[RMDB]
RNA sequence: GGGAACGACUCGAGUAGAGUCGAAAAGAUAUGGAAGCUUCACGCUUUUGACGAGACGUUAUCGGAAACGAUAACGUUCUCGAUAAGCGUAAGCUUCCUAAGUCAAACUCCUCGUUCGCGAGGAGAAUCUACUUAUGAGCUUCGGCUCAUAAGUAGAAAAAGAAACAACAACAACAAC
Reactivity to DMS in 0.01 (KOAc 150mM, MgCl2 10mM, bicine 150mM(pH8.5), 24C), signal-to-noise 3, nucleotides 027 to 126: g010a050u000a300u000g000g000a010a010g010c000u000u010c300a020c000g020c010u000u010u010u020g030a180c160g010a010g000a040c000g000u010u000a000u010c000g000g000a110a060a180c010g000a010u010a000a010c000g000u000u000c000u000c000g010a140u000a010a030g010c000g010u000a020a010g010c000u000u000c000c000u000a000a060g010u000c010a160a150a200c010u010c000c000u000c010g050u010u020c270g060c020g010a010g020g000a000g000a030a070
Reactivity to 2A3 in 0.01 (KOAc 150mM, MgCl2 10mM, bicine 150mM(pH8.5), 24C), signal-to-noise 3, nucleotides 027 to 126: g020a010u060a020u140g020g000a000a010g000c000u040u040c230a020c050g030c040u020u110u230u300g300a190c110g010a000g000a000c000g020u000u000a000u010c010g000g000a070a010a030c010g010a000u000a000a010c000g000u060u000c000u010c000g000a010u060a010a030g000c000g000u000a010a000g010c010u000u010c000c000u020a000a000g000u010c010a000a050a210c000u000c000c020u000c010g020u050u070c300g000c010g200a010g010g000a000g010a000a060